This 177-nucleotide RNA was probed chemically with 2A3 and DMS. Values cover nucleotides 27 to 126.

[RMDB]
RNA sequence: GGGAACGACUCGAGUAGAGUCGAAAAGAUAUGGAAUAUGUAGGCAACAUAUAGACAUGAUCUAGUACCAUCGGAAACGAUGGGACCGAUCAACAGCUAUAUGUUGCCUACCGCUAUUCCUAAGUCACAUAGCUUGAUGGUUCGCCAUCAAGCUAUGAAAAGAAACAACAACAACAAC
Reactivity to 2A3 in 0.01 (KOAc 150mM, MgCl2 10mM, bicine 150mM(pH8.5), 24C), signal-to-noise 2, nucleotides 027 to 126: g020a010u130a070u240g020g040a030a010u020a050u280g000u000a000g000g020c000a010a010c000a010u000a000u010a020g060a040c060a170u120g010a000u020c020u020a020g030u000a010c000c000a020u010c000g000g040a120a080a070c010g000a000u000g000g000g010a010c000c010g000a010u010c010a000a060c080a050g000c000u000a000u000a000u010g000u010u010g000c010c000u000a000c010c000g000c000u000a010u000u040c000c020u000a060a000g020u010c000a000
Reactivity to DMS in 0.01 (KOAc 150mM, MgCl2 10mM, bicine 150mM(pH8.5), 24C), signal-to-noise 4, nucleotides 027 to 126: g000a050u000a300u010g000g010a020a000u000a000u010g000u000a010g000g000c000a000a010c000a010u000a010u000a000g000a080c120a280u000g010a000u000c000u010a090g000u000a240c000c000a010u000c000g000g000a140a100a190c010g000a000u000g030g000g000a060c290c240g000a030u000c000a030a070c300a150g000c000u000a000u000a010u000g010u000u000g000c000c000u000a000c000c010g000c000u000a010u010u000c000c010u020a040a120g010u000c050a250
The reactions ran in a buffer of 150 mM KOAc, 10 mM MgCl2 and 150 mM bicine (pH 8.5), at 24 C.
2A3 adducts were read by reverse transcription with SuperScript II with manganese.
DMS adducts were read by reverse transcription with MarathonRT.